[RMDB]
RNA sequence: GGGAACGACUCGAGUAGAGUCGAAAAUGGCGGGCCCGAAUGCGGCCCUGCCGAUCGUGUUGCCUGGCGAUAUGCCGGGCAUUCACGCGCGGGAGUAUUUCGGCUACAACCUGCCGGUGGUCGAGGAGCUCCUCGACAACCUGACCAACGUCGAGGGCUAUUCACCUAGAUUCGUCUAGGUGAAUAGAAAAGAAACAACAACAACAAC
Reactivity to DMS in 0.01 (KOAc 150mM, MgCl2 10mM, bicine 150mM(pH8.5), 24C), signal-to-noise 1, nucleotides 027 to 156: u010g010g040c000g010g050g080c050c010c020g010a090a040u010g040c020g030g060c010c000c010u010g070c010c020g000a010u000c020g030u000g010u010u000g000c000c020u000g010g040c000g020a300u000a090u010g020c000c000g010g010g020c000a000u000u000c010a000c000g030c070g000c010g050g040g010a210g030u000a140u000u000u000c040g030g000c300u000a100c030a040a080c040c000u010g010c040c030g000g050u000g010g030u000c010g020a110g000g010a300g000c260u010c040c000u000c010g020a020c000a060a070c020c040u000g000a120c060c050a070a100c130g030u000c010g010a130g000g000g020
Reactivity to 2A3 in 0.01 (KOAc 150mM, MgCl2 10mM, bicine 150mM(pH8.5), 24C), signal-to-noise 3, nucleotides 027 to 156: u150g000g000c000g010g010g010c040c000c000g060a050a060u150g020c110g030g300c010c000c010u030g010c040c020g000a120u140c020g000u000g000u000u010g000c000c000u000g000g000c050g130a300u150a090u300g000c000c000g000g000g000c000a000u030u000c000a000c000g030c000g000c020g000g000g010a050g030u030a070u030u090u010c010g010g000c000u120a050c040a090a090c020c010u010g010c020c010g000g000u030g000g010u020c020g010a020g060g010a150g070c080u150c130c020u000c000g010a000c000a010a020c010c020u040g070a050c020c020a070a030c070g050u040c030g030a090g000g040g040
This 207-nucleotide RNA was probed chemically with DMS and 2A3.
2A3 adducts were read by reverse transcription with SuperScript II with manganese.
The DMS profile rests on 2,818 reads.
Conditions: 150 mM KOAc, 10 mM MgCl2 and 150 mM bicine (pH 8.5), 24 C.
It was measured as part of the RMDB library OK3TST.
The 2A3 profile rests on 2,359 reads.